[RMDB]
RNA sequence: GGGAACGACUCGAGUAGAGUCGAAAAUUUGACACUUAUGACCCUAUUUAUAAGAAUGGUGCCAUGUAUAAAGGCAAACCAAUUCUUUGGGUCAAUAAAGCAUCUUAUGAUACUAAUCUUAAUAAGUCCGGUGACAGCUUCGGCUGUCACAAAAGAAACAACAACAACAAC
Reactivity to 2A3 in 0.01 (KOAc 150mM, MgCl2 10mM, bicine 150mM(pH8.5), 24C), signal-to-noise 4, nucleotides 027 to 129: u060u070u090g010a000c010a000c060u010u000a000u000g000a000c020c000c000u030a090u040u140u010a300u060a040a000g000a000a020u000g030g000u010g010c000c000a110u080g110u080a090u200a110a170a000g000g000c000a200a010a090c000c020a000a260u040u000c030u010u020u000g010g000g000u000c000a000a000u040a010a030a000g010c000a030u010c000u070u060a030u180g080a040u020a080c010u020a080a130u080c050u120u060a060a020u050a010a070g090u030c060c030g020
Reactivity to DMS in 0.01 (KOAc 150mM, MgCl2 10mM, bicine 150mM(pH8.5), 24C), signal-to-noise 2, nucleotides 027 to 129: u000u000u000g020a050c030a190c060u080u000a080u000g020a010c000c020c010u090a090u010u040u010a110u000a010a040g020a000a020u050g000g050u020g010c030c010a090u040g040u080a230u000a120a140a070g050g010c060a070a020a080c000c000a070a040u010u020c020u000u000u000g010g020g070u000c000a000a000u000a060a010a120g010c100a150u020c030u100u020a030u080g020a000u030a030c220u000a080a100u000c080u000u060a020a040u030a030a070g020u000c090c100g030